[RMDB]
RNA sequence: GGGAACGACUCGAGUAGAGUCGAAAAGUAAAUAAACGGCACCUAUUAGGUGGUGCCGAACCAGCGUGACCUACCAACACGCAACGAGCAGUCUGGUAUGACUGCAAACCUAAGGUAAACAAAAAAAUCAUAGGAAUAGGUUCGCCUAUUCCUAUGAAAAAGAAACAACAACAACAAC
Reactivity to DMS in 0.01 (KOAc 150mM, MgCl2 10mM, bicine 150mM(pH8.5), 24C), signal-to-noise 3, nucleotides 027 to 126: g000u010a030a070a120u010a060a140a140c000g000g010c000a010c000c000u000a120u000u000a060g020g020u000g010g010u000g000c000c010g000a030a060c090c170a160g010c010g030u000g000a050c040c020u010a070c040c030a180a030c000a000c020g000c010a100a080c190g030a160g000c000a030g000u000c000u000g030g000u000a110u010g000a020c000u020g010c000a020a030a040c010c020u010a020a020g010g010u000a070a040a030c080a010a010a040a090a040a060a100
Reactivity to 2A3 in 0.01 (KOAc 150mM, MgCl2 10mM, bicine 150mM(pH8.5), 24C), signal-to-noise 2, nucleotides 027 to 126: g000u040a000a050a240u180a050a120a050c010g010g020c000a000c010c020u010a150u080u100a070g000g030u020g000g000u000g000c000c010g000a000a040c020c020a020g000c010g000u010g080a230c000c030u060a090c010c060a050a030c000a010c020g000c000a010a060c050g000a030g030c000a000g000u010c000u130g120g080u300a090u240g030a020c000u020g000c000a000a020a000c010c000u030a050a020g080g040u120a170a130a030c120a030a070a040a020a000a010a080
An RNA of 177 nucleotides, treated with DMS and 2A3 and read out base by base. The DMS profile rests on 2,201 reads. It was measured as part of the RMDB library M2PK90. The RNA was probed in 150 mM KOAc, 10 mM MgCl2 and 150 mM bicine (pH 8.5) at 24 C.